[RMDB]
This 177-nucleotide RNA was probed chemically with DMS and 2A3. 2A3 adducts were read by reverse transcription with SuperScript II with manganese. For 2A3, 1,331 sequencing reads were counted. The RNA was probed in 150 mM KOAc, 10 mM MgCl2 and 150 mM bicine (pH 8.5) at 24 C. The DMS profile rests on 972 reads.
RNA sequence: GGGAACGACUCGAGUAGAGUCGAAAACAAACUAACUUCGGUUAGUUUGAAAGAUCGCUGCAACGCGCAGAGCUCUCGCGAGAGCGCGAAUGCACAAAGAAAAAAGAUAAUCGUUCGCGAUUAUCAACAAAUGUUAGCACUUCGGUGCUAACAUUUGAAAAGAAACAACAACAACAAC
Reactivity to DMS in 0.01 (KOAc 150mM, MgCl2 10mM, bicine 150mM(pH8.5), 24C), signal-to-noise 2, nucleotides 027 to 126: c000a010a010a010c000u010a030a000c000u000u030c240g010g000u000u000a010g000u000u010u000g010a110a080a130g010a120u000c120g010c170u000g000c020a050a220c040g000c020g020c020a090g000a300g000c020u000c060u000c270g000c150g010a120g000a090g000c010g010c000g000a060a130u000g010c010a050c160a080a100a150g050a000a060a060a100a150a030g000a010u000a010a000u000c000g030u000u040c270g010c020g000a030u000u000a000u000c000a050a090
Reactivity to 2A3 in 0.01 (KOAc 150mM, MgCl2 10mM, bicine 150mM(pH8.5), 24C), signal-to-noise 2, nucleotides 027 to 126: c000a000a010a000c000u000a000a000c000u030u020c080g060g020u010u000a000g010u000u000u000g010a000a020a030g080a040u180c020g010c180u050g010c000a010a050c010g000c030g010c040a000g040a080g170c000u040c040u080c150g060c060g020a040g000a030g050c010g000c010g060a200a090u060g040c030a000c040a010a080a050g270a020a210a040a030a000a010g010a000u010a010a010u010c000g000u050u060c240g030c000g060a000u010u000a000u020c010a000a050